The data come from the RNA Mapping Database (RMDB), library 15KLIB. Chemical mapping of a 170-nucleotide RNA with DMS and 2A3. For 2A3 the reverse transcriptase was SuperScript II with manganese.
RNA sequence: GGGAACGACUCGAGUAGAGUCGAAAAACCCAGCUCUUAAGAUGGUUCAAACACAUCUUAGCCACUAUGUUCUUAACAUAGAUUGGUUGUGGUUUGCAUUUGAGACUGGUUUGGCAUACAUGCUCUAGAACCGUUAAGUUCGCUUAACGGAAAAGAAACAACAACAACAAC
Reactivity to DMS in 0.01 (KOAc 150mM, MgCl2 10mM, bicine 150mM(pH8.5), 24C), signal-to-noise 9, nucleotides 027 to 129: a090c000c000c000a080g010c140u020c050u010u010a000a030g020a020u020g010g030u050u050c120a050a040a070c070a080c000a080u020c120u000u010a050g000c060c040a040c000u000a000u000g000u010u040c250u030u060a070a040c010a000u020a020g000a140u040u020g020g020u000u040g020u000g000g020u010u010u010g010c050a050u010u020u030g000a030g020a070c050u030g020g010u020u020u000g010g030c040a080u030a100c150a080u020g020c010u020c070u010a070g010a140a130
Reactivity to 2A3 in 0.01 (KOAc 150mM, MgCl2 10mM, bicine 150mM(pH8.5), 24C), signal-to-noise 9, nucleotides 027 to 129: a000c000c000c000a000g020c060u020c010u040u050a050a020g050a070u040g050g030u170u170c030a020a030a010c060a010c000a190u070c050u120u110a010g000c000c000a010c000u000a000u010g020u060u090c180u230u290a050a010c010a010u020a030g050a160u040u130g020g000u040u090g020u050g030g070u030u020u020g010c020a030u000u020u050g030a010g010a030c000u010g030g010u050u080u110g040g000c010a020u080a120c050a080u190g020c010u010c030u080a060g030a130a050